[RMDB]
RNA sequence: GGGAACGACUCGAGUAGAGUCGAAAACGGCGGUCCUUGGACUAACAGCCCCAAAAACGGCCAGUAGUUUUCUUGGCUGAUUUGCUGUUGGCAUGGGGGCGUCUCGUAGCUGGGAGGUCCGUAUUGGCGAUAAAUAUAUAUUCGUAUAUAUUUAUCGAAAAGAAACAACAACAACAAC
Reactivity to 2A3 in 0.01 (KOAc 150mM, MgCl2 10mM, bicine 150mM(pH8.5), 24C), signal-to-noise 5, nucleotides 027 to 126: c020g020g000c000g030g100u050c000c010u030u060g100g040a100c000u000a030a010c020a020g010c000c000c000c030a120a080a000a010a000c030g020g000c000c000a010g010u060a030g010u030u030u160u020c030u080u090g100g000c070u030g050a110u040u050u130g000c010u010g010u080u040g000g000c020a040u040g010g010g000g000g000c000g030u000c010u000c040g010u020a010g010c000u040g000g060g000a030g000g040u060c010c020g010u050a130u070u200g080g030
Reactivity to DMS in 0.01 (KOAc 150mM, MgCl2 10mM, bicine 150mM(pH8.5), 24C), signal-to-noise 6, nucleotides 027 to 126: c080g010g010c100g010g010u010c020c020u010u020g010g010a070c020u010a050a140c060a120g000c030c140c030c080a050a060a040a070a130c090g000g000c000c000a030g000u000a070g010u020u020u020u010c030u020u020g010g000c020u010g000a030u020u010u020g010c010u000g010u000u010g000g010c040a070u020g000g000g000g010g010c000g000u010c040u000c040g000u000a070g010c100u040g000g000g010a070g000g020u020c010c010g000u020a080u030u010g010g010